[RMDB]
RNA sequence: GGGAACGACUCGAGUAGAGUCGAAAAAAGUCGGAUUCUGGCCGGGCAUGGUGGCUCAUACCUGUAAUCCCAGCACUUUGAGAGGCCGAGGCAAGAGGAUCACUUGAGUUUGGGAGUUUGAGACCAGCUUGCACAACACAGUGAGACCCUGUCUCUAUAUAUUAAUGGGUUUCGACCCAUUAAUAUAAAAAGAAACAACAACAACAAC
Reactivity to DMS in 0.01 (KOAc 150mM, MgCl2 10mM, bicine 150mM(pH8.5), 24C), signal-to-noise 2, nucleotides 027 to 156: a090a060g010u000c040g010g000a130u010u010c020u020g020g030c040c060g020g020g000c040a060u000g030g040u000g010g030c050u010c050a070u000a050c020c010u010g030u000a050a050u010c000c000c010a130g000c050a110c030u000u000u000g020a170g020a110g000g040c030c050g030a050g000g050c000a060a050g010a090g000g020a300u000c040a030c060u020u000g000a090g030u000u000u000g030g000g010a070g000u000u000u000g000a150g000a110c020c020a100g030c050u000u030g000c060a100c040a040a090c060a130c030a060g010u000g000a110g020a080c020c010c050u000g000u000c000u000c010u010a210
Reactivity to 2A3 in 0.01 (KOAc 150mM, MgCl2 10mM, bicine 150mM(pH8.5), 24C), signal-to-noise 1, nucleotides 027 to 156: a050a040g130u100c090g040g000a060u160u010c040u050g030g050c030c000g000g010g060c040a020u020g050g060u060g060g030c020u000c040a040u080a090c000c030u030g050u100a010a070u060c000c000c000a020g020c030a020c060u040u110u160g030a050g040a070g150g000c060c050g000a050g030g000c030a060a070g020a090g070g020a040u040c010a000c020u080u110g000a010g040u110u090u070g040g020g010a060g020u060u040u080g070a060g010a050c010c050a000g030c000u020u090g060c040a030c040a140a030c060a010c010a020g010u030g070a050g050a130c020c000c000u030g020u000c030u020c020u030a040